RNA sequence: GGGAACGACUCGAGUAGAGUCGAAAACGGUACUUCGGUACCGCAACAGAUAUGGACGAAUUGUCAGAAGGAACCCAGCGAAGAACUCGGAAACGAGGGAGCUGUUAGUACUUCUUGGAUUUAUUCGUCCUAAGUCGCUUAGCCUUUUCGAAGGCAAAAUGUACCAUGACUUCGGUCAUGGUACAUUAAAAGAAACAACAACAACAAC
Reactivity to DMS in 0.01 (KOAc 150mM, MgCl2 10mM, bicine 150mM(pH8.5), 24C), signal-to-noise 1, nucleotides 027 to 156: c010g020g000u000a020c000u000u020c300g140g040u000a000c000c000g040c010a070a040c110a120g020a190u000a110u000g020g000a070c010g000a070a020u000u020g070u000c000a010g000a060a020g000g040a210a160c180c300c000a040g020c030g000a110a150g000a100a190c000u000c010g010g000a160a140a290c020g000a080g000g000g000a280g040c000u020g000u000u010a120g000u000a090c000u010u000c000u010u000g010g020a070u000u000u000a020u000u000c000g030u000c000c000u010a000a190g020u030c030g000c020u010u000a040g000c020c000u000u000u000u000c170g020a070a070g020g030c020a020a040
Reactivity to 2A3 in 0.01 (KOAc 150mM, MgCl2 10mM, bicine 150mM(pH8.5), 24C), signal-to-noise 3, nucleotides 027 to 156: c010g010g000u000a010c010u030u070c270g150g000u000a000c000c010g000c020a090a070c030a020g050a020u050a020u190g000g000a000c000g000a000a000u010u020g000u020c000a000g010a000a000g020g000a010a000c000c000c020a000g000c010g120a240a050g020a060a040c000u000c020g010g060a090a090a070c010g010a000g020g010g000a010g000c020u010g000u020u000a000g000u000a010c000u030u010c010u010u140g060g000a010u090u270u100a050u000u090c000g000u000c000c000u000a000a000g020u010c010g000c110u080u140a020g010c010c000u030u050u070u200c300g130a020a000g000g000c020a080a080

About this RNA:
Chemical mapping of a 207-nucleotide RNA with DMS and 2A3. 2A3 adducts were read by reverse transcription with SuperScript II with manganese. Source: RMDB library RNAMAK, as collected in RNAgym.